Source: RMDB library OK1LIB, as collected in RNAgym. The record gives the reactivity of an RNA of 177 nucleotides to 2A3 and DMS. Reactivities are given for positions 27 through 126. 2A3 adducts were read by reverse transcription with SuperScript II with manganese. The DMS profile rests on 7,634 reads.
RNA sequence: GGGAACGACUCGAGUAGAGUCGAAAAGAAGAUGAACGUAACUAUGAAGAGUUAGAAUUCGAAGUUGCGCAAGAAGUAAUGAAGAGCAAAAUGAUCCAGAUGCAAACUCUUGCACGUACCGUCGAAGACAGCUAGUACUCUUCGGAGUACUAGCUGUAAAAGAAACAACAACAACAAC
Reactivity to 2A3 in 0.01 (KOAc 150mM, MgCl2 10mM, bicine 150mM(pH8.5), 24C), signal-to-noise 4, nucleotides 027 to 126: g090a050a010g020a030u110g040a060a000c020g030u040a000a000c010u000a100u210g080a030a080g050a000g140u130u300a030g150a180a100u070u040c040g020a030a000g000u000u010g060c060g000c060a000a010g100a060a010g060u150a010a120u140g080a050a080g030a030g050c080a070a010a050a170u120g020a020u060c020c080a040g020a060u080g020c040a010a000a140c020u000c010u030u080g010c040a010c060g050u030a080c050c000g030u090c010g000a050a000g090
Reactivity to DMS in 0.01 (KOAc 150mM, MgCl2 10mM, bicine 150mM(pH8.5), 24C), signal-to-noise 5, nucleotides 027 to 126: g000a120a080g000a050u020g030a110a100c020g040u000a080a050c060u010a150u030g030a060a060g000a070g010u010u020a100g010a110a190u000u000c020g010a130a150g010u000u010g000c020g000c070a080a050g010a050a040g010u030a070a090u010g010a070a060g010a090g000c040a040a030a060a060u020g010a070u040c050c060a100g000a100u010g000c070a040a030a050c030u000c020u000u010g020c050a050c030g010u010a100c060c060g020u010c040g010a140a020g000